[RMDB]
Notes:
This 177-nucleotide RNA was probed chemically with DMS and 2A3. It was measured as part of the RMDB libraries RFM100 and RFMREP. The reactions ran in a buffer of 150 mM KOAc, 10 mM MgCl2 and 150 mM bicine (pH 8.5), at 24 C.
RNA sequence: GGGAACGACUCGAGUAGAGUCGAAAAGUUAGGCAUAUUGCCCGAUGCACUUACACACGCUUGACCCACCAGCUUCGGCAAAUACAUUAAGAGGUACUGAGAACGAGGCGUACCGAAAGGGAGACUCCAGGGUAUUACUGUUCGCAGUAAUACCCUGAAAAGAAACAACAACAACAAC
Reactivity to DMS in 0.01 (KOAc 150mM, MgCl2 10mM, bicine 150mM(pH8.5), 24C), signal-to-noise 9, nucleotides 027 to 126: g010u020u020a060g010g010c030a080u010a070u020u010g020c020c010c020g010a040u010g010c030a130c080u010u010a080c100a100c060a060c060g010c040u010u000g000a130c030c020c010a090c080c070a100g010c030u000u020c040g000g020c070a060a060a110u010a060c090a080u020u030a070a110g010a140g010g020u010a030c060u010g000a150g010a080a100c070g010a050g000g010c300g010u010a080c020c020g000a060a060a120g000g000g000a080g000a110c050u010c070
Reactivity to 2A3 in 0.01 (KOAc 150mM, MgCl2 10mM, bicine 150mM(pH8.5), 24C), signal-to-noise 9, nucleotides 027 to 126: g090u090u090a050g030g030c060a040u110a070u140u260g050c000c000c000g020a020u040g010c040a060c140u050u100a020c050a000c010a000c060g030c040u050u090g080a100c000c000c010a020c020c010a020g010c000u050u050c030g020g000c020a010a110a040u160a030c070a070u140u150a130a040g040a030g090g030u060a050c050u090g070a040g030a170a030c050g000a030g040g000c030g020u030a030c010c010g040a070a030a020g060g010g010a050g040a020c010u020c030

Source information
2A3 adducts were read by reverse transcription with SuperScript II with manganese. For DMS the reverse transcriptase was MarathonRT. High DMS reactivity at an A or C suggests that its Watson-Crick edge is free.